Structure probing data (2A3 and DMS) for a 177-nucleotide construct.
RNA sequence: GGGAACGACUCGAGUAGAGUCGAAAAGAAAGAAAGAAAGAAUGAUGACAGUCUCCGGAAUCGCUGCACUGCUUUGAUGAAAGCCCAUUUGAACCCUUUUCCAUCUGAUGACUGAGCGUUUUCGCAAAUUACAUUUUCAGUUCGCUGAAAAUGUAAUAAAAGAAACAACAACAACAAC
Reactivity to 2A3 in 0.01 (KOAc 150mM, MgCl2 10mM, bicine 150mM(pH8.5), 24C), signal-to-noise 9, nucleotides 027 to 126: g080a010a040a000g090a020a080a010g070a030a100a010g080a050a070u130g060a050u090g020a060c020a030g040u020c010u000c050c010g020g030a040a030u060c030g000c050u050g020c030a020c070u060g030c020u060u060u110g120a130u080g050a070a030a030g020c000c010c020a050u080u020u090g060a060a070c010c000c000u020u020u030u010c040c020a070u030c050u080g060a080u080g020a050c030u040g020a010g030c030g010u010u000u040u060c030g000c030a110a100
Reactivity to DMS in 0.01 (KOAc 150mM, MgCl2 10mM, bicine 150mM(pH8.5), 24C), signal-to-noise 9, nucleotides 027 to 126: g010a090a080a080g010a080a070a080g000a080a110a090g010a100a060u020g010a070u020g000a090c080a080g000u010c020u000c030c020g010g010a080a060u010c060g020c030u010g000c050a060c050u010g010c030u010u010u010g010a080u010g000a070a060a080g000c030c040c020a100u010u010u010g010a060a100c050c020c010u000u000u000u010c010c020a070u020c050u010g000a090u020g000a060c060u010g000a060g010c070g000u000u000u000u000c020g010c210a050a050

As a SHAPE reagent, 2A3 marks flexible, mostly unpaired nucleotides at the ribose 2'-OH.
It was measured as part of the RMDB libraries RFM100 and RFMREP.
For 2A3 the reverse transcriptase was SuperScript II with manganese.
The RNA was probed in 150 mM KOAc, 10 mM MgCl2 and 150 mM bicine (pH 8.5) at 24 C.
Values are in units of 0.01, from 0 to 300, in steps of 10.